[RMDB]
RNA sequence: GGGAACGACUCGAGUAGAGUCGAAAACGCAGCCUGGCGUCGUGACAGUUGACGUGUCCCUGGACAUGUCCGGGUUUCUGGCCGCGCUCGACGCGCUGCCCUCGGCCGAGGAUUUGGCGCGCCGCGCACUCUGUUAGGUUUUCGAACCUAACAGAGUAAAAGAAACAACAACAACAAC
Reactivity to DMS in 0.01 (KOAc 150mM, MgCl2 10mM, bicine 150mM(pH8.5), 24C), signal-to-noise 9, nucleotides 027 to 126: c090g010c070a090g010c040c040u010g010g010c050g010u000c050g010u010g010a110c100a080g010u010u010g010a040c020g020u000g010u000c020c030c130u010g010g010a030c040a040u000g010u000c010c090g010g010g010u000u010u000c050u000g010g010c060c070g010c060g020c020u010c060g010a030c030g010c010g020c010u000g010c250c000c010u000c020g010g030c260c170g000a040g000g000a070u000u010u000g000g010c000g010c020g000c010c010g010c080g020c060
Reactivity to 2A3 in 0.01 (KOAc 150mM, MgCl2 10mM, bicine 150mM(pH8.5), 24C), signal-to-noise 6, nucleotides 027 to 126: c050g000c030a020g050c010c030u080g050g000c030g020u070c020g060u100g060a050c030a110g050u130u080g110a030c030g010u030g030u040c020c010c050u170g120g020a020c030a070u090g030u000c030c010g130g030g000u030u090u060c050u080g060g000c050c020g020c030g000c030u060c080g050a060c040g000c000g000c000u020g000c010c000c000u040c020g240g060c140c190g000a030g030g000a050u170u100u300g030g000c020g000c010g000c010c020g010c010g000c000